[RMDB]
About this RNA
The data come from the RNA Mapping Database (RMDB), library M2RFPK. This 207-nucleotide RNA was probed chemically with DMS and 2A3. Values are in units of 0.01, from 0 to 300, in steps of 10. For DMS, 2,439 sequencing reads were counted. The RNA was probed in 150 mM KOAc, 10 mM MgCl2 and 150 mM bicine (pH 8.5) at 24 C.
RNA sequence: GGGAACGACUCGAGUAGAGUCGAAAAGACAAUCCAGGGAACCGGAUGUCAUCACGUUGUUGCAGUAUCAGAUGGCAUCUUAAAUCCGAUCUGCAAAUAAGCAUGUAGAAAGCUGAUGUGGGCUUUAAAAACGUGGUGCUGUUCGCAGCACCACGAACUGGUAAUAAUGGUUCGCCAUUAUUACCAGAAAAGAAACAACAACAACAAC
Reactivity to DMS in 0.01 (KOAc 150mM, MgCl2 10mM, bicine 150mM(pH8.5), 24C), signal-to-noise 1, nucleotides 027 to 156: g000a110c070a100a080u010c040c040a070g000g010g030a120a130c080c040g000g010a050u000g000u000c000a140u040c020a210c180g050u000u000g020u000u000g050c000a090g000u000a060u010c070a100g020a000u000g000g000c040a030u000c060u030u000a000a080a150u010c030c030g010a030u000c060u010g020c000a050a050a130u010a090a140g000c000a100u030g010u000a120g000a050a060a180g000c010u000g030a090u000g030u000g000g010g010c060u020u030u000a010a040a040a090a120c010g050u000g020g000u000g010c000u020g020u000u010c240g040c030a000g000c010a000c020c000a010c000g000a010a020
Reactivity to 2A3 in 0.01 (KOAc 150mM, MgCl2 10mM, bicine 150mM(pH8.5), 24C), signal-to-noise 2, nucleotides 027 to 156: g060a060c030a020a150u100c040c070a070g020g040g040a100a040c050c010g020g000a010u010g000u010c010a010u010c000a010c100g090u120u060g030u050u020g030c060a050g050u140a090u170c030a030g010a010u000g010g000c000a010u000c000u010u010a090a070a000u010c010c010g040a050u010c000u040g000c000a000a060a090u110a200a120g020c030a000u130g010u070a050g070a130a060a000g010c030u010g030a070u090g150u050g100g040g050c000u150u160u240a030a060a000a000a000c000g020u010g000g000u010g000c000u000g080u030u050c250g000c080a000g000c030a010c000c000a000c020g000a000a000